[RMDB]
RNA sequence: GGGAACGACUCGAGUAGAGUCGAAAAAUCGGACUUGUGCAGAAGCAAAUACGUCUGUAGCUUUAGGUUGGCUGCAGAAGCGGUUCACGCGCAGCGUCAACCGGGACGUCAUUCGCAUACAGCCGGGACCCUGCCCUCCGUUCGCGGAGGGCAGGGUAAAAGAAACAACAACAACAAC
Reactivity to 2A3 in 0.01 (KOAc 150mM, MgCl2 10mM, bicine 150mM(pH8.5), 24C), signal-to-noise 1, nucleotides 027 to 126: a000u210c000g000g070a040c000u000u000g000u000g000c120a270g070a010a000g120c120a000a000a260u140a020c000g040u000c070u110g120u130a000g000c010u000u130u300a190g080g000u020u050g000g000c060u100g000c030a010g060a080a000g070c000g160g050u160u110c260a020c040g030c000g000c000a000g000c000g210u000c000a000a090c000c000g000g120g020a000c000g080u050c050a160u000u040c000g000c010a000u010a070c160a000g000c000c000g020g010g020